[RMDB]
RNA sequence: GGGAACGACUCGAGUAGAGUCGAAAAGGCGGGUUCGCCCGCCCGAGAUACCUUUGUGACCAUGGGAGCGUAUGCAUGCAGAGGCCCAUUGGGCUCCCCACCUGCAUGUACGCGACGAUCAUGGUCACUCUGGUUUGAGCGGGAGUUCGCUCCCGAAAUUUACAGAAUAGUUCGCUAUUCUGUAAAUAAAAGAAACAACAACAACAAC
Reactivity to DMS in 0.01 (KOAc 150mM, MgCl2 10mM, bicine 150mM(pH8.5), 24C), signal-to-noise 2, nucleotides 027 to 156: g000g040c010g010g040g030u000u000c210g000c000c010c000g110c000c000c000g010a080g020a170u000a040c040c000u000u000u000g000u000g000a020c030c000a030u000g000g020g000a300g010c000g020u020a050u000g010c030a040u010g020c020a030g010a260g000g000c020c010c010a270u010u010g030g020g000c010u000c170c050c020c040a300c230c000u000g000c000a010u010g020u000a000c010g030c000g020a070c060g000a260u000c000a010u000g000g010u000c000a000c000u000c020u000g010g020u000u000u000g000a160g030c020g020g000g010a070g020u010u010c060g030c010u010c000c000c000g010a000a070
Reactivity to 2A3 in 0.01 (KOAc 150mM, MgCl2 10mM, bicine 150mM(pH8.5), 24C), signal-to-noise 5, nucleotides 027 to 156: g040g000c020g030g000g030u070u130c170g140c030c010c000g010c020c000c000g070a120g030a060u140a060c000c000u000u010u010g000u000g000a000c000c000a000u010g000g000g000a100g010c010g010u060a070u220g030c010a010u000g000c000a010g010a030g000g030c040c010c090a260u190u300g030g000g000c010u100c030c010c020c000a030c000c000u000g000c000a000u000g010u010a020c020g000c010g060a090c000g000a010u030c000a010u000g000g000u000c000a000c000u000c000u000g020g010u010u110u190g070a050g010c030g000g010g000a020g010u090u110c130g030c080u000c000c000c010g010a090a060